[RMDB]
RNA sequence: GGGAACGACUCGAGUAGAGUCGAAAACGGUAGAUAAGUGUGGAUGGAGUGAGAGGAGGAGUCCUGUGUAUGUCGUUGUCAACGUCGACCGAGCGUCCGUGCCAAGCGCUGCGUCACCAGGGGAUGACGUCUGUGCUUCGUUCGCGAAGCACAGACGAAAAGAAACAACAACAACAAC
Reactivity to DMS in 0.01 (KOAc 150mM, MgCl2 10mM, bicine 150mM(pH8.5), 24C), signal-to-noise 2, nucleotides 027 to 126: c130g040g010u000a050g010a050u010a050a100g010u010g000u000g010g000a050u000g000g010a050g020u010g000a080g030a100g000g000a090g000g010a070g020u000c020c030u040g010u000g020u000a080u000g040u000c010g040u000u010g000u010c200a040a130c080g020u000c080g000a010c090c050g000a050g000c090g000u010c020c020g000u010g010c060c030a040a040g000c020g030c050u000g010c110g010u000c010a020c010c120a070g070g000g020g020a180u020g030a110
Reactivity to 2A3 in 0.01 (KOAc 150mM, MgCl2 10mM, bicine 150mM(pH8.5), 24C), signal-to-noise 2, nucleotides 027 to 126: c020g030g000u040a050g080a140u040a050a060g040u090g080u080g080g080a110u000g010g000a050g090u130g030a070g020a050g060g000a010g010g000a000g010u040c000c050u050g000u020g000u020a070u130g000u010c000g060u010u040g040u030c020a000a070c070g070u000c030g030a030c040c010g020a020g100c010g000u030c000c000g060u060g000c050c020a010a040g030c020g020c060u030g010c010g050u010c000a050c100c010a040g000g000g000g000a030u090g070a030